Conditions: 150 mM KOAc, 10 mM MgCl2 and 150 mM bicine (pH 8.5), 24 C. An RNA of 177 nucleotides, treated with DMS and read out base by base.
[RMDB]
RNA sequence: GGGAACGACUCGAGUAGAGUCGAAAACGCGAACUGUUCGCAGUUCGCGAAAUAACAAACAACAGCUAACCUACUGCGAUAAGCCCUAGCUAAGUAGGAAAAAAAGAGGAAAGUUCGCUUUCCUCAACAUCCUAGAAUCCUUCGGGAUUCUAGGAUGAAAAGAAACAACAACAACAAC
Reactivity to DMS in 0.01 (KOAc 150mM, MgCl2 10mM, bicine 150mM(pH8.5), 24C), signal-to-noise 1, nucleotides 027 to 126: c020g020c000g000a000a000c010u000g020u010u000c140g030c000a010g010u000u000c000g020c000g000a000a020a030u020a030a050c220a140a090a050c150a080a080c040a050g020c090u000a130a100c000c010u000a050c020u000g030c020g000a060u000a060a140g000c000c000c000u000a300g000c010u000a030a060g020u000a010g000g030a000a010a070a050a060a060a160g000a000g000g000a000a030a010g000u000u020c190g010c000u000u000u000c000c000u000c020a020a120
DMS adducts were read by reverse transcription with MarathonRT. Values cover nucleotides 27 to 126.